[RMDB]
RNA sequence: GGGAACGACUCGAGUAGAGUCGAAAACGUGAACUACGGUUCACGAACUGUUCGUUCGCGAACAGACUCCGGCGUUCGCGCCGGAGAACAUAUACUUCGGUAUAUGACGCUUGCUUCGGCAAGCGAAGGCCAUCGUGAGAUGGCCAACGGUCGGCUACGGCCGACCGAAGUUACUACUACGGUAGUAACAGUCGGCGGUGACGCCGACAACAAGCUUCUUCGGAAGCUUGAAGAGGUUCUAGCUACACCCUCUAUAAAAAACUAAUACUCGUUAGUUCGCUAACGAGAAAAGAAACAACAACAACAAC
Reactivity to 2A3 in 0.01 (KOAc 150mM, MgCl2 10mM, bicine 150mM(pH8.5), 24C), signal-to-noise 1, nucleotides 027 to 266: c000g000u000g000a000a000c000u040a000c230g160g000u000u000c000a000c020g010a020a050c000u000g000u030u020c000g000u040u010c280g000c000g160a020a010c020a000g000a120c030u000c000c030g000g020c010g010u080u000c230g000c000g020c140c000g040g000a000g000a000a010c000a000u000a000u000a000c000u020u060c200g060g000u000a000u000a000u000g040a040c070g000c000u000u020g000c000u000u090c180g040g000c000a000a000g000c000g000a020a020g030g010c020c000a020u000c000g050u030g100a180g000a050u000g000g000c000c000a000a000c000g000g000u000c020g000g000c010u050a190c300g160g000c050c040g000a010c000c030g000a000a020g000u000u000a000c020u000a000c010u000a000c250g070g010u000a000g000u000a000a000c010a000g000u000c000g010g000c000g020g030u060g030a030c000g000c010c000g000a000c000a000a000c000a010a010g000c000u000u020c010u010u070c090g090g010a000a010g000c000u000u030g000a010a010g000a040g040g030u130u090c050u270a040g090c060u130a110c030a050c120c060c040u000c000u050a170u300a300a030a020a050a010a000c100u220a070a150u290a240
Chemical mapping of a 307-nucleotide RNA with 2A3. The data come from the RNA Mapping Database (RMDB), library POS240. Reactivities are given for positions 27 through 266.